[RMDB]
RNA sequence: GGGAACGACUCGAGUAGAGUCGAAAAUCCUAAGUCACUAACCAUAACUUAGAUUUGUGUCUCGAGUCGGAAACGACUAAGACAGGACACUGUCAGUUAUGAUGAAAGUGAUAUGGAAAAAGGAUAGCACAAGAGGUUCGCCUCUUGUGCUAUCCAACCAUAAAAACUAGUUCGCUAGUUUUUAUGGAAAAGAAACAACAACAACAAC
Reactivity to DMS in 0.01 (KOAc 150mM, MgCl2 10mM, bicine 150mM(pH8.5), 24C), signal-to-noise 2, nucleotides 027 to 156: u000c010c010u000a030a210g020u000c000a040c000u010a240a080c010c010a120u000a020a040c020u000u010a140g020a040u000u010u000g030u000g000u000c000u020c120g050a040g000u000c000g040g010a180a110a300c040g030a000c040u000a120a170g040a180c300a110g000g000a020c030a010c010u000g010u000c010a060g000u000u000a020u000g010a000u020g000a110a230a100g060u000g020a040u000a200u000g020g020a070a110a070a200a130g000g010a010u000a000g020c000a020c000a000a000g000a020g000g020u000u010c300g040c020c000u000c000u000u000g000u000g000c010u000a010u000c000c010a000a000
Reactivity to 2A3 in 0.01 (KOAc 150mM, MgCl2 10mM, bicine 150mM(pH8.5), 24C), signal-to-noise 2, nucleotides 027 to 156: u020c020c000u040a120a020g010u000c000a000c010u040a080a100c040c000a000u020a010a020c020u100u150a030g020a050u300u230u250g000u000g030u010c030u050c070g070a040g000u000c010g000g040a050a100a040c020g020a020c000u030a080a040g120a110c090a060g010g020a000c000a000c040u010g000u000c000a000g000u000u020a010u010g060a050u140g070a180a120a030g000u020g000a010u020a100u110g080g000a020a090a080a020a030g000g000a000u000a000g000c000a000c010a010a010g000a020g010g050u080u060c160g050c020c000u000c000u000u000g000u000g010c000u010a000u000c000c010a000a010
Chemical mapping of a 207-nucleotide RNA with DMS and 2A3. Values cover nucleotides 27 to 156. For DMS, 3,874 sequencing reads were counted.